Source information: An RNA of 177 nucleotides, treated with 2A3 and DMS and read out base by base. For 2A3 the reverse transcriptase was SuperScript II with manganese. Values cover nucleotides 27 to 126. The reactions ran in a buffer of 150 mM KOAc, 10 mM MgCl2 and 150 mM bicine (pH 8.5), at 24 C.
RNA sequence: GGGAACGACUCGAGUAGAGUCGAAAAGCCGUGCUCGAGAGGGAGCAGAAAAUGCAGAGCUAUCCCGUCGUUUCGCUAAACAAAUGCCAAACGACAAAUUGCGUUACAUACGCAAUCCUCUAAUGAAUGUAUUAUUAAGAUUCGUCUUAAUAAUACAAAAAGAAACAACAACAACAAC
Reactivity to 2A3 in 0.01 (KOAc 150mM, MgCl2 10mM, bicine 150mM(pH8.5), 24C), signal-to-noise 9, nucleotides 027 to 126: g000c000c020g080u040g000c000u010c010g080a050g000a020g050g060g010a010g000c020a000g150a020a190a020a020u220g030c070a020g040a040g070c010u020a060u050c000c010c020g000u000c000g000u000u000u010c010g000c010u060a190a230a140c060a050a130a020u100g000c000c010a000a000a000c000g010a000c020a000a120a010u020u010g000c000g010u030u100a170c070a140u260a020c040g000c000a000a020u010c010c000u020c010u070a110a150u170g090a120a060
Reactivity to DMS in 0.01 (KOAc 150mM, MgCl2 10mM, bicine 150mM(pH8.5), 24C), signal-to-noise 9, nucleotides 027 to 126: g030c030c060g010u000g010c010u000c010g010a050g000a060g010g010g000a040g010c010a080g010a060a070a100a090u010g010c110a080g010a110g020c030u000a150u000c000c010c010g030u000c000g000u000u000u000c300g010c010u010a040a090a130c300a060a080a090u010g000c000c050a000a010a010c000g000a010c010a040a060a040u000u000g000c000g010u000u000a100c250a130u010a030c000g010c000a020a020u000c010c010u000c010u000a080a110u010g000a120a120